An RNA of 177 nucleotides, treated with 2A3 and DMS and read out base by base. The DMS profile rests on 3,198 reads.
RNA sequence: GGGAACGACUCGAGUAGAGUCGAAAACUGCGCACUUCGCGCGGGGGCCCACGGCAGGCAGCACAACCCUCCCUCCAUCUCCCACUCCACCGGCGGCCGAAGCCCCACGCGCACUGGAAGGGGCCCAUAAUCAGGCCAAUUUCGAUUGGCCUGAUUAAAAAGAAACAACAACAACAAC
Reactivity to 2A3 in 0.01 (KOAc 150mM, MgCl2 10mM, bicine 150mM(pH8.5), 24C), signal-to-noise 2, nucleotides 027 to 126: c020u030g020c030g010c010a080c110u140u110c160g000c000g000c000g040g000g000g020g020c010c010c000a020c030g000g000c030a030g020g030c000a000g010c020a030c010a110a090c010c000c020u030c010c010c010u050c030c000a020u020c020u030c050c000c000a030c060u040c020c000a030c000c000g010g010c020g020g000c010c010g000a010a010g010c020c000c010c000a070c060g080c000g000c010a010c080u070g050g050a050a000g030g000g030g000c010c000c000a050
Reactivity to DMS in 0.01 (KOAc 150mM, MgCl2 10mM, bicine 150mM(pH8.5), 24C), signal-to-noise 2, nucleotides 027 to 126: c020u010g010c170g020c020a160c170u020u030c140g010c030g030c000g000g000g000g040g040c030c020c030a170c080g000g000c010a060g000g030c030a060g010c060a100c060a120a070c120c020c010u000c010c000c000u000c050c040a010u000c010u000c000c000c000a120c090u020c100c040a050c010c040g000g010c050g020g010c010c030g000a300a160g000c020c000c010c010a060c020g040c080g030c000a070c190u030g000g010a060a010g000g000g000g000c000c040c000a060